Source: RMDB library 15KLIB, as collected in RNAgym. The record gives the reactivity of an RNA of 170 nucleotides to 2A3 and DMS. The reactions ran in a buffer of 150 mM KOAc, 10 mM MgCl2 and 150 mM bicine (pH 8.5), at 24 C. The 2A3 profile rests on 7,751 reads.
[RMDB]
RNA sequence: GGGAACGACUCGAGUAGAGUCGAAAACGAAGCUGGAUAGGCUUCGAUGUUGAGGGUGCUCAUGCUUCCCGUAAUGCAUGUGGCACCAAUGUGCCUCUACAAUUAGGAUUUUCAACUGGUGUGAACUACGCAAGUGGCUUCGGCCACUUGAAAAGAAACAACAACAACAAC
Reactivity to 2A3 in 0.01 (KOAc 150mM, MgCl2 10mM, bicine 150mM(pH8.5), 24C), signal-to-noise 5, nucleotides 027 to 129: c000g000a000a000g010c030u090g060g150a190u180a200g020g000c000u000u000c000g000a070u060g050u090u100g020a090g030g010g020u000g010c000u000c010a000u000g000c000u080u040c020c020c010g030u240a060a090u170g000c000a000u030g010u170g030g000c000a000c000c000a000a020u040g000u080g030c050c000u000c040u070a060c040a050a070u050u050a110g030g090a080u060u000u020u110c060a090a020c000u030g000g000u000g020u010g030a030a050c020u030a020c090g000
Reactivity to DMS in 0.01 (KOAc 150mM, MgCl2 10mM, bicine 150mM(pH8.5), 24C), signal-to-noise 3, nucleotides 027 to 129: c040g020a060a000g020c000u040g000g100a090u110a130g000g040c000u000u000c030g020a120u060g000u000u000g000a080g000g000g000u000g050c020u030c010a020u040g000c020u060u040c050c050c050g040u060a140a050u000g030c040a020u040g030u050g010g040c000a050c010c030a050a000u000g020u000g020c050c010u020c100u030a050c110a080a080u050u030a080g000g000a040u000u000u000u000c060a070a060c060u020g080g010u020g000u050g040a080a090c050u000a080c180g020